[RMDB]
RNA sequence: GGGAACGACUCGAGUAGAGUCGAAAAGAUAUGGACGCUCUCGGGAGUACUGGCGGUCGGAAACGACCGCAGUACAUCGAUCGAGGAGCGUCCUAAGUCAAAAGCUAAAUUCUUCGGAAUUUAGCAACCUUAAUUCAAAGUUCGCUUUGAAUUAAGGAAAAGAAACAACAACAACAAC
Reactivity to DMS in 0.01 (KOAc 150mM, MgCl2 10mM, bicine 150mM(pH8.5), 24C), signal-to-noise 5, nucleotides 027 to 126: g000a040u000a300u000g000g000a010c000g020c000u000c000u000c000g010g000g000a040g020u000a000c000u010g030g030c010g010g020u000c000g010g000a070a070a160c010g010a010c000c000g020c000a000g010u000a010c000a210u000c160g000a030u010c000g000a050g010g000a020g020c000g010u000c000c000u000a010a060g000u010c030a090a070a120a110g010c000u000a000a000a010u000u000c000u000u010c200g020g000a020a000u000u000u000a000g010c000a020a020
Reactivity to 2A3 in 0.01 (KOAc 150mM, MgCl2 10mM, bicine 150mM(pH8.5), 24C), signal-to-noise 3, nucleotides 027 to 126: g010a010u060a040u150g000g000a000c000g010c000u000c000u010c010g050g020g020a090g020u020a000c010u090g300g130c010g010g010u010c010g010g000a090a060a040c010g000a000c000c030g020c000a010g000u000a000c010a140u110c050g110a090u060c020g010a100g100g060a010g020c010g000u000c000c000u000a010a010g010u010c030a050a000a170a000g000c000u000a000a000a010u020u000c010u030u070c290g140g010a010a000u000u010u000a000g000c000a000a000